[RMDB]
RNA sequence: GGGAACGACUCGAGUAGAGUCGAAAAAGCUCGAUACGUCGAGCAAGGAACUGGAGAGGAGGCAAGAUGCUGGCAUAGCUGUUGAACUGGGAACCUGCUAUGCCAACAUAUUGCCAUCUUUCCUGAAUAGUUGCUGUGCAUUCGUGCACAGCAACUAAAAAGAAACAACAACAACAAC
Reactivity to 2A3 in 0.01 (KOAc 150mM, MgCl2 10mM, bicine 150mM(pH8.5), 24C), signal-to-noise 1, nucleotides 027 to 126: a000g000c020u000c000g000a000u020a010c250g040u020c000g020a000g000c000a010a010g010g000a040a190c060u060g010g000a000g000a020g000g000a000g000g000c000a010a000g000a020u000g000c000u020g000g020c000a000u000a000g000c000u010g080u150u100g090a250a140c110u170g060g000g050a070a070c020c000u000g000c000u000a050u000g000c010c000a000a000c000a000u000a030u000u000g000c020c000a000u000c000u000u000u000c000c000u000g090a000a020
Structure probing data (2A3) for a 177-nucleotide construct. The reactions ran in a buffer of 150 mM KOAc, 10 mM MgCl2 and 150 mM bicine (pH 8.5), at 24 C. 2A3 adducts were read by reverse transcription with SuperScript II with manganese. The data come from the RNA Mapping Database (RMDB), library RFM100.